[RMDB]
RNA sequence: GGGAACGACUCGAGUAGAGUCGAAAACUGCUGUUAAAGACUUUGACUUUUAUCGUUAUAACAGGCCUACUGUUCUUGACAUUUGUCAAGCUAAGGUCACAUGUGCUGUAGUUAAGCGUUAUUUUGACGUGUAUGAAGGUGGCUGUAUUACUGCCAAGGUUAUGGGCAAAUUCGUUUGCCCAUAACCAAAAGAAACAACAACAACAAC
Reactivity to 2A3 in 0.01 (KOAc 150mM, MgCl2 10mM, bicine 150mM(pH8.5), 24C), signal-to-noise 2, nucleotides 027 to 156: c000u080g060c050u050g020u060u040a120a050a000g000a060c010u040u050u060g070a050c010u060u060u080u260a160u300c090g050u050u100a090u020a140a060c040a010g000g020c000c010u070a090c070u090g140u180u070c000u000u020g010a000c000a180u160u290u300g010u000c000a000a000g000c040u090a040a000g000g010u080c060a000c000a050u050g030u030g020c050u050g040u070a070g040u050u090a190a030g000c000g050u060u050a130u000u180u070u080g010a000c010g030u040g010u080a080u140g070a100a040g060g010u010g000g000c030u020g080u120a140u080u080a040c090u040g000c000c020a030a040